[RMDB]
RNA sequence: GGGAACGACUCGAGUAGAGUCGAAAAGGAACUUGGUUAUUGCACAAAACACUACAAUACUGGAAAGUUUACAUGCAUUGAAGUCAAGUUUCAUUUGGAACGUCAGAUGGGAUACUAUUUAAUCCAGCUGAGAAACUGCUUUCGAGCAGUUUCUCAGAAAAGAAACAACAACAACAAC
Reactivity to 2A3 in 0.01 (KOAc 150mM, MgCl2 10mM, bicine 150mM(pH8.5), 24C), signal-to-noise 1, nucleotides 027 to 126: g020g000a060a000c000u000u020g020g000u180u050a080u120u080g000c010a050c030a120a000a060a000c030a000c060u210a040c040a200a060u080a280c210u130g100g000a090a110a100g020u030u030u000a080c050a060u020g000c020a010u050u100g130a120a010g040u030c000a000a000g000u000u000u000c080a040u010u060u020g060g040a100a030c080g130u060c040a070g000a100u020g050g000g000a050u030a120c020u070a100u300u170u180a100a000u000c000c000a000g050
Reactivity to DMS in 0.01 (KOAc 150mM, MgCl2 10mM, bicine 150mM(pH8.5), 24C), signal-to-noise 2, nucleotides 027 to 126: g070g020a000a000c000u010u000g000g000u060u000a190u000u030g000c060a000c250a010a010a000a000c020a050c230u000a300c180a120a050u080a190c300u000g000g000a100a300a070g000u000u000u000a010c300a300u010g000c040a090u010u000g000a050a170g000u000c000a000a000g000u000u000u000c040a020u000u000u000g000g000a050a110c120g000u050c170a060g020a040u030g030g010g040a000u050a020c120u000a020u000u000u000a030a060u000c000c000a100g060
An RNA of 177 nucleotides, treated with 2A3 and DMS and read out base by base. Source: RMDB library OK1LIB, as collected in RNAgym. The RNA was probed in 150 mM KOAc, 10 mM MgCl2 and 150 mM bicine (pH 8.5) at 24 C. For 2A3 the reverse transcriptase was SuperScript II with manganese. DMS adducts were read by reverse transcription with MarathonRT.